[RMDB]
RNA sequence: GGGAACGACUCGAGUAGAGUCGAAAAAUGAUGAAUAAUGCAUGGAGUGUCGUCUACUCUAAUUAAUAGAUCUUGAAGUAUACGAUGCUUUACCAUGUUUAAUACUUUAUCAGAUAUCAGACAAUCUAUUAUGUCAUAAUACAUAUAAUUUUGAGCGCAUAUGGACUGUUUUCGAACAGUCCAUAUGAAAAGAAACAACAACAACAAC
Reactivity to DMS in 0.01 (KOAc 150mM, MgCl2 10mM, bicine 150mM(pH8.5), 24C), signal-to-noise 3, nucleotides 027 to 156: a070u010g020a050u010g010a070a060u000a100a090u010g000c000a020u000g000g010a060g030u010g010u000c010g010u000c060u000a020c010u010c030u000a040a040u010u000a120a260u010a170g000a100u020c150u000u000g000a080a050g000u010a030u000a030c050g010a030u000g000c020u000u000u000a200c020c020a050u000g010u000u000u020a050a140u000a060c080u000u000u000a040u000c030a080g010a180u010a120u010c070a150g010a070c030a050a110u000c040u000a060u000u000a080u000g010u000c030a060u000a090a110u000a070c020a060u000a080u020a040a110u000u010u000u000g000a140g030c080g010
Reactivity to 2A3 in 0.01 (KOAc 150mM, MgCl2 10mM, bicine 150mM(pH8.5), 24C), signal-to-noise 6, nucleotides 027 to 156: a000u040g010a020u020g000a030a040u100a090a020u090g000c000a010u000g000g010a000g010u000g010u000c000g000u000c010u000a020c000u000c000u020a060a020u100u150a080a130u130a110g120a100u070c070u060u060g050a090a010g010u000a000u000a000c010g000a000u000g010c000u080u070u060a100c010c000a000u000g000u000u010u020a020a010u010a020c040u010u050u060a020u030c010a010g020a110u070a040u180c020a010g050a090c020a040a060u050c070u110a140u140u070a050u150g020u040c020a030u080a280a020u240a120c020a000u120a000u160a150a160u230u120u150u120g080a060g080c100g000
This 207-nucleotide RNA was probed chemically with DMS and 2A3. It was measured as part of the RMDB library OK3TST. Conditions: 150 mM KOAc, 10 mM MgCl2 and 150 mM bicine (pH 8.5), 24 C. The DMS profile rests on 5,010 reads. For 2A3, 4,352 sequencing reads were counted.